Source information: The record gives the reactivity of an RNA of 177 nucleotides to DMS and 2A3. For DMS the reverse transcriptase was MarathonRT. Reactivities are given for positions 27 through 126.

RNA sequence: GGGAACGACUCGAGUAGAGUCGAAAACACACGCUAGGCAAUACGACCGCUCCAUAUCUGCCGAAUGAUGCCAAUGUAUGGUGCCUACUGUCCAACGUAACCGUUAAUCGCUGCCUUGGCGGCGAUUCCCUUACAUUAACUUCGGUUAAUGUAAGGGAAAAGAAACAACAACAACAAC
Reactivity to DMS in 0.01 (KOAc 150mM, MgCl2 10mM, bicine 150mM(pH8.5), 24C), signal-to-noise 4, nucleotides 027 to 126: c120a090c100a070c110g000c060u010a080g000g010c030a080a070u010a070c130g020a100c070c070g020c050u000c020c020a030u010a030u000c020u010g000c100c040g010a060a060u010g000a090u010g000c040c040a060a080u010g000u000a050u000g010g000u000g020c040c020u000a030c040u010g000u000c040c050a050a090c080g010u000a060a150c060c030g010u000u010a080a060u000c010g020c010u000g000c010c030u000u010g010g030c000g020g000c010g010a010u000u000
Reactivity to 2A3 in 0.01 (KOAc 150mM, MgCl2 10mM, bicine 150mM(pH8.5), 24C), signal-to-noise 9, nucleotides 027 to 126: c070a000c010a000c050g020c050u050a040g040g000c020a030a070u060a110c050g040a040c020c040g010c020u010c010c000a020u020a030u050c030u060g060c010c010g050a080a090u140g060a050u110g020c020c030a070a040u150g050u080a070u080g120g030u030g030c000c010u050a060c020u050g040u050c020c010a040a010c060g040u040a050a040c030c010g030u030u150a040a010u020c010g000c010u010g000c000c030u060u270g110g000c000g000g000c000g000a000u020u010